[RMDB]
Structure probing data (2A3 and DMS) for a 177-nucleotide construct. The 2A3 profile rests on 17,457 reads. Conditions: 150 mM KOAc, 10 mM MgCl2 and 150 mM bicine (pH 8.5), 24 C. DMS adducts were read by reverse transcription with MarathonRT.
RNA sequence: GGGAACGACUCGAGUAGAGUCGAAAAGAUAUGGACGAUCCCAGGACAUGCUGUCACGUCGGAAACGACGUGCCAGCAACAGCCUGGAUCGUCCUAAGUCAAACGUGGCAUCUUCGGAUGCCACGAAGCUCAUUAUAUCCUUCGGGAUAUAAUGAGCAAAAGAAACAACAACAACAAC
Reactivity to 2A3 in 0.01 (KOAc 150mM, MgCl2 10mM, bicine 150mM(pH8.5), 24C), signal-to-noise 4, nucleotides 027 to 126: g000a010u000a000u060g000g000a010c000g010a010u080c150c140c050a010g010g000a030c140a170u300g000c010u010g000u010c000a000c010g010u000c000g010g010a020a020a010c000g010a000c000g000u000g030c020c000a010g050c010a000a010c020a000g040c000c000u000g010g010a000u000c000g000u000c000c000u000a000a010g000u000c010a030a050a120c020g000u000g000g000c000a000u010c020u070u050c300g210g000a000u000g000c000c000a000c000g000a000a000
Reactivity to DMS in 0.01 (KOAc 150mM, MgCl2 10mM, bicine 150mM(pH8.5), 24C), signal-to-noise 4, nucleotides 027 to 126: g000a020u000a080u010g000g010a020c000g010a010u000c180c070c070a010g000g010a030c130a060u020g020c000u000g000u000c000a000c000g010u000c010g020g000a020a020a050c000g010a010c000g020u000g000c030c000a010g000c000a040a020c220a150g010c000c000u000g000g000a010u000c000g020u000c010c000u000a000a050g010u000c000a130a110a290c020g030u000g010g000c010a010u000c000u000u020c220g020g000a010u000g010c000c000a000c000g000a030a050